The data come from the RNA Mapping Database (RMDB), library OK1LIB. An RNA of 177 nucleotides, treated with 2A3 and DMS and read out base by base. Values cover nucleotides 27 to 126. DMS adducts were read by reverse transcription with MarathonRT.
RNA sequence: GGGAACGACUCGAGUAGAGUCGAAAAUGGUUGCCUGGAAGUCCACGUUGUCGAACAGCGCGUCGAUCUCAAUCGUCGCCUGUGCCGCGGACGACAGCGUGCGCUUGGCGCGCUCGCAGGCGGUGCGCCGCGUAUUAAUAUUCGUAUUAAUACGCGGAAAAGAAACAACAACAACAAC
Reactivity to 2A3 in 0.01 (KOAc 150mM, MgCl2 10mM, bicine 150mM(pH8.5), 24C), signal-to-noise 9, nucleotides 027 to 126: u190g080g020u120u110g020c010c010u050g120g070a040a010g030u040c010c000a010c010g020u020u020g020u020c020g030a060a040c010a010g010c010g000c000g190u010c000g000a030u010c080u040c300a170a100u020c010g010u000c000g000c000c010u020g010u020g010c020c030g040c050g050g050a040c000g000a000c010a000g000c000g000u010g020c050g010c030u020u090g060g000c010g000c000g000c010u040c030g100c020a020g040g010c020g010g010u040g000c010g000
Reactivity to DMS in 0.01 (KOAc 150mM, MgCl2 10mM, bicine 150mM(pH8.5), 24C), signal-to-noise 9, nucleotides 027 to 126: u030g010g010u010u010g000c020c010u000g010g010a060a050g010u010c140c010a040c030g010u010u000g010u010c020g010a090a030c010a010g010c220g020c000g010u000c000g000a020u000c270u060c270a110a090u000c000g000u000c010g010c010c000u000g000u000g000c100c050g010c040g010g010a160c020g000a030c050a020g010c010g010u000g000c230g010c050u000u010g010g020c030g010c010g000c010u000c060g010c060a040g000g010c030g000g010u010g000c050g010